[RMDB]
Annotation:
Structure probing data (DMS and 2A3) for a 177-nucleotide construct. The data come from the RNA Mapping Database (RMDB), library OK1LIB. The reactions ran in a buffer of 150 mM KOAc, 10 mM MgCl2 and 150 mM bicine (pH 8.5), at 24 C. Reactivities are rounded to 0.1 and cut off at 0 and 3.
RNA sequence: GGGAACGACUCGAGUAGAGUCGAAAAUACGCUGGUAGCAGCAAGUAGCAGCUCUAUCCGCAGAUGAGCGGAAUAUACAGAUGACAAUGGAUCUCGAUAGAGAUGCUACAAUCGAGACCAUUAGAGACAUAUGAGGACCAUUCGUGGUCCUCAUAUGAAAAGAAACAACAACAACAAC
Reactivity to DMS in 0.01 (KOAc 150mM, MgCl2 10mM, bicine 150mM(pH8.5), 24C), signal-to-noise 5, nucleotides 027 to 126: u030a110c140g030c000u010g000g020u070a130g030c070a020g010c020a130a150g020u000a010g020c010a040g000c010u000c030u010a090u000c010c030g010c020a140g020a090u050g010a160g000c040g000g030a070a060u010a040u040a100c260a090g020a060u020g010a140c170a040a050u010g000g030a080u000c000u000c000g000a050u020a010g000a050g000a030u020g000c010u010a020c020a110a070u010c020g010a030g000a030c010c010a030u000u010a070g000a130g000a170
Reactivity to 2A3 in 0.01 (KOAc 150mM, MgCl2 10mM, bicine 150mM(pH8.5), 24C), signal-to-noise 7, nucleotides 027 to 126: u250a040c080g000c020u020g040g020u130a090g110c050a010g000c050a080a040g010u030a010g010c030a020g000c000u020c000u020a050u010c000c020g010c040a050g100a300u230g080a050g050c010g010g060a010a000u130a000u020a030c060a010g220a120u150g160a100c070a040a020u030g050g100a250u000c000u000c000g010a000u020a040g100a000g040a040u070g030c000u030a030c050a020a020u000c000g000a000g000a010c000c000a000u000u040a060g070a000g020a050